[RMDB]
RNA sequence: GGGAACGACUCGAGUAGAGUCGAAAAGCAAGUCGCAUCGCAAAACCGCGGCAAGUGGAGUUAGCGAGAGGAGGCUGGGUUUUGGCUUCCUUAAGCAAUCGGUCACCGAGAAGGUGUGGUAGUUACCUAGACAGUUUUCUGUUCGCAGAAAACUGAACCUAUAGCUUAUAUUCGUAUAAGCUAUAGGAAAAGAAACAACAACAACAAC
Reactivity to DMS in 0.01 (KOAc 150mM, MgCl2 10mM, bicine 150mM(pH8.5), 24C), signal-to-noise 2, nucleotides 027 to 156: g010c030a110a170g000u000c040g040c020a100u000c010g010c080a070a080a060a170c080c050g020c020g020g080c020a100a170g030u000g010g000a160g010u010u000a150g020c000g030a300g010a060g000g000a000g010g000c010u000g000g040g030u000u000u000u000g020g020c010u000u010c020c020u000u010a020a300g020c010a050a110u010c020g020g000u010c070a130c020c000g010a150g020a120a140g030g030u010g000u000g010g030u000a090g020u000u010a050c050c040u000a180g000a200c000a020g000u000u000u000u000c020u000g020u010u010c300g010c000a000g000a010a010a000a040c000u000g000a030a100
Reactivity to 2A3 in 0.01 (KOAc 150mM, MgCl2 10mM, bicine 150mM(pH8.5), 24C), signal-to-noise 4, nucleotides 027 to 156: g020c030a050a060g050u020c010g020c030a050u070c060g020c100a080a080a050a100c040c050g010c020g040g000c080a090a040g050u060g030g050a090g040u080u130a030g020c000g000a020g000a010g040g000a000g030g000c020u050g010g110g180u080u070u130u260g020g010c000u000u000c000c000u000u010a020a000g000c000a010a040u030c030g020g020u070c030a030c060c010g040a050g040a130a050g030g010u050g000u040g060g010u030a070g050u050u070a040c020c010u020a030g040a120c000a000g000u000u000u000u000c000u010g050u060u070c200g010c060a000g010a000a000a000a000c000u010g000a010a030
The record gives the reactivity of an RNA of 207 nucleotides to DMS and 2A3. For DMS the reverse transcriptase was MarathonRT.